[RMDB]
RNA sequence: GGGAACGACUCGAGUAGAGUCGAAAAGUAGAAUGUAUCAUGUCAGUAAGCAUGCCGGGGAAUGGUGGUUUACCCCGUUAUCAAAUGAUUACCGACCAAUAAUUGGCGAAACUCGUUUCGCGUUGGCAAAGUCACGGCGUGUUCGCACGCCGUGAAAUCAGACUUAAUCCUUCGGGAUUAAGUCUGAAAAAGAAACAACAACAACAAC
Reactivity to 2A3 in 0.01 (KOAc 150mM, MgCl2 10mM, bicine 150mM(pH8.5), 24C), signal-to-noise 3, nucleotides 027 to 156: g100u120a040g040a200a050u140g030u140a070u120c050a030u070g070u040c050a040g110u170a110a000g020c030a010u020g060c030c000g010g000g000g010a010a020u040g020g010u010g000g040u010u010u110a050c010c000c020c000g020u010u010a010u020c010a000a010a030u070g020a020u050u050a020c000c030g060a120c030c070a020a020u140a170a100u120u150g060g000c010g010a030a010a000c100u070c100g060u000u020u030c010g000c010g020u010u010g040g020c060a070a080a070g060u010c010a000c010g000g000c000g000u010g030u030u030c140g040c040a010c000g000c000c000g000u000g010a010a000a000
Reactivity to DMS in 0.01 (KOAc 150mM, MgCl2 10mM, bicine 150mM(pH8.5), 24C), signal-to-noise 1, nucleotides 027 to 156: g060u000a080g010a070a070u030g010u000a110u000c010a110u000g010u000c010a060g020u000a120a070g010c040a030u000g000c260c000g040g010g050g010a050a080u000g020g050u000g030g000u000u000u030a150c010c000c000c000g000u000u010a040u030c290a130a110a030u000g000a090u010u010a030c030c000g030a050c080c060a050a070u000a030a130u010u010g000g030c010g030a080a020a040c060u000c180g030u000u000u000c020g030c070g000u000u020g030g040c070a070a090a210g010u000c000a040c000g020g020c000g080u000g040u010u010c280g020c010a010c000g010c000c100g000u010g000a000a000a070
An RNA of 207 nucleotides, treated with 2A3 and DMS and read out base by base. Conditions: 150 mM KOAc, 10 mM MgCl2 and 150 mM bicine (pH 8.5), 24 C. The data come from the RNA Mapping Database (RMDB), library M2RFPK.